RNA sequence: GGGAACGACUCGAGUAGAGUCGAAAAGAUAUGGACCCACUUGGACCUCGAGUGCCAUCGUCGGAAACGACGACUGGUGCUUAGACAAGCUAGUGGGUCCUAAGUCAAAGUUGCCUUCGGGCAACAACACUACUGUCAGGUUCGCCUGACAGUAGUGAAAAGAAACAACAACAACAAC
Reactivity to 2A3 in 0.01 (KOAc 150mM, MgCl2 10mM, bicine 150mM(pH8.5), 24C), signal-to-noise 2, nucleotides 027 to 126: g050a020u080a050u110g000g000a000c000c000c000a000c000u050u170g050g080a120c000c040u010c050g050a020g000u000g010c020c000a020u000c010g010u000c000g000g010a090a040a110c020g000a000c000g010a010c070u010g000g020u010g000c000u000u000a030g010a010c060a110a090g060c010u020a000g010u000g020g000g000u000c000c000u000a000a010g010u000c020a040a030a060g000u000u000g000c010c000u030u080c300g080g010g000c000a000a000c010a000a010
Reactivity to DMS in 0.01 (KOAc 150mM, MgCl2 10mM, bicine 150mM(pH8.5), 24C), signal-to-noise 4, nucleotides 027 to 126: g010a050u000a300u010g020g010a030c000c010c000a000c020u000u010g010g020a090c140c160u010c060g010a010g020u000g000c000c000a050u000c000g010u000c000g000g000a090a110a200c000g010a010c000g000a000c260u000g000g020u010g010c000u000u000a030g020a040c070a110a140g030c040u010a010g020u000g000g000g000u000c000c000u000a000a100g010u000c070a090a110a130g000u000u010g010c000c000u000u010c190g020g020g000c000a000a000c020a060a230